The record gives the reactivity of an RNA of 177 nucleotides to 2A3 and DMS. Conditions: 150 mM KOAc, 10 mM MgCl2 and 150 mM bicine (pH 8.5), 24 C. For 2A3 the reverse transcriptase was SuperScript II with manganese.
RNA sequence: GGGAACGACUCGAGUAGAGUCGAAAAGAAAAGACGAUGUUAUUAUGAUUCUCGAGUAAUAGCAGGUCAAGCGUACUACUCGCCGAACGGAAGGCCGACUGUUCGCGCAAUGAAACGAGGAAGAAAACCGAGGCUAUGAUUUCGAUCAUAGCCUCGGAAAAGAAACAACAACAACAAC
Reactivity to 2A3 in 0.01 (KOAc 150mM, MgCl2 10mM, bicine 150mM(pH8.5), 24C), signal-to-noise 1, nucleotides 027 to 126: g180a000a000a000a020g040a000c010g180a250u070g000u050u020a030u000u000a160u170g060a110u070u000c130u110c120g030a000g000u000a000a000u000a000g000c030a000g100g000u100c000a030a000g000c000g000u000a000c030u020a050c000u030c030g000c000c000g050a000a020c020g000g020a000a000g140g000c000c000g010a030c070u060g000u000u000c050g000c080g000c080a010a300u230g020a010a110a000c100g000a080g070g040a130a000g110a050a260a000a000
Reactivity to DMS in 0.01 (KOAc 150mM, MgCl2 10mM, bicine 150mM(pH8.5), 24C), signal-to-noise 1, nucleotides 027 to 126: g050a150a070a090a150g020a050c050g000a210u000g070u080u080a020u000u000a000u000g010a110u020u000c090u000c120g000a300g000u010a000a040u000a010g000c010a010g090g070u000c070a050a150g000c010g000u000a100c000u040a020c040u000c020g100c300c000g020a060a000c100g040g020a000a250g000g000c050c000g010a070c050u040g060u000u000c000g010c190g000c020a040a160u000g070a100a050a010c200g000a070g020g000a120a120g000a020a100a240a120